[RMDB]
RNA sequence: GGGAACGACUCGAGUAGAGUCGAAAACACAGAAUCUUCGGAUUCUGUGAAAGGAACAAAAACAUGCAAAACUUCCAAAAAGCAUGAAGGACAAAAGUCCAAAAACACAUCGCUUCGGCGAUGUGAACACGUUUUUACUGUUCGCAGUAAAAACGUGAAAAGAAACAACAACAACAAC
Reactivity to 2A3 in 0.01 (KOAc 150mM, MgCl2 10mM, bicine 150mM(pH8.5), 24C), signal-to-noise 2, nucleotides 027 to 126: c010a000c010a000g010a010a000u000c010u070u050c170g120g010a000u030u000c000u000g000u000g000a010a000a000g060g030a070a040c050a040a070a050a020a030c010a010u010g000c010a010a020a160a170c060u180u050c010c020a050a010a010a030a090g000c010a000u030g050a080a110g010g000a000c030a030a300a060a090g000u050c000c000a050a010a040a050a010c010a000c000a000u000c000g020c030u040u090c180g120g000c000g000a000u000g000u000g000a000a000
Reactivity to DMS in 0.01 (KOAc 150mM, MgCl2 10mM, bicine 150mM(pH8.5), 24C), signal-to-noise 2, nucleotides 027 to 126: c020a000c000a000g000a030a000u010c000u000u000c180g030g000a000u000u000c050u000g000u000g000a010a060a140g010g030a090a100c130a020a090a060a130a100c000a000u000g010c010a050a050a070a150c130u000u000c060c030a040a140a080a150a190g010c000a000u000g010a140a090g000g020a000c000a020a030a090a110g010u010c000c000a010a050a050a070a210c000a000c000a000u000c000g000c000u000u020c150g000g010c000g010a000u000g020u000g000a050a100
This 177-nucleotide RNA was probed chemically with 2A3 and DMS. Conditions: 150 mM KOAc, 10 mM MgCl2 and 150 mM bicine (pH 8.5), 24 C. For 2A3, 2,175 sequencing reads were counted.